[RMDB]
RNA sequence: GGGAACGACUCGAGUAGAGUCGAAAAGAUUUAAACAGAUGGAGAUACACAAAUGUUUGAAUCCCAGUAACAAAUAUCCUGGUAUCUCGGGUAUACAGUAGUGCAGAUACUGUAUUUUUAAUGCUCCUUAGGUUUUCCAUCUUCGGAUGGAAAACAAGUGUUAUUAAGGUUUCGACCUUAAUAACACAAAAGAAACAACAACAACAAC
Reactivity to DMS in 0.01 (KOAc 150mM, MgCl2 10mM, bicine 150mM(pH8.5), 24C), signal-to-noise 1, nucleotides 027 to 156: g030a110u000u000u010a020a050a000c000a110g000a300u000g000g030a110g010a130u000a040c050a170c090a040a060a180u000g010u010u000u010g010a000a060u000c010c050c050a180g000u020a080a180c050a060a070a090u000a130u010c040c030u010g000g060u000a040u000c030u000c020g050g020g030u010a040u000a010c010a020g020u000a010g000u000g060c080a130g000a150u000a020c010u010g010u000a000u000u000u000u000u000a100a130u010g020c030u010c020c010u000u000a090g030g010u000u000u000u000c000c000a000u000c000u000u010c300g040g020a000u000g010g010a020a000a000a030c000a030a050
Reactivity to 2A3 in 0.01 (KOAc 150mM, MgCl2 10mM, bicine 150mM(pH8.5), 24C), signal-to-noise 4, nucleotides 027 to 156: g000a000u010u040u040a010a010a030c010a000g070a050u040g010g000a050g020a060u060a030c040a000c020a080a140a030u030g010u010u000u030g040a030a020u010c030c010c020a030g100u110a140a090c080a110a090a020u060a040u110c010c010u020g020g000u020a020u020c020u010c010g000g000g000u030a010u000a000c000a000g020u020a000g050u060g280c050a020g050a220u010a000c000u000g010u010a010u010u050u020u030u110a140a120u090g030c030u080c070c060u070u120a050g090g070u010u000u000u000c000c000a000u000c010u020u010c100g090g000a000u010g000g000a000a000a000a000c010a020a020
Annotation
The data come from the RNA Mapping Database (RMDB), library M2RFOK. The record gives the reactivity of an RNA of 207 nucleotides to DMS and 2A3. For DMS the reverse transcriptase was MarathonRT. 2A3 adducts were read by reverse transcription with SuperScript II with manganese.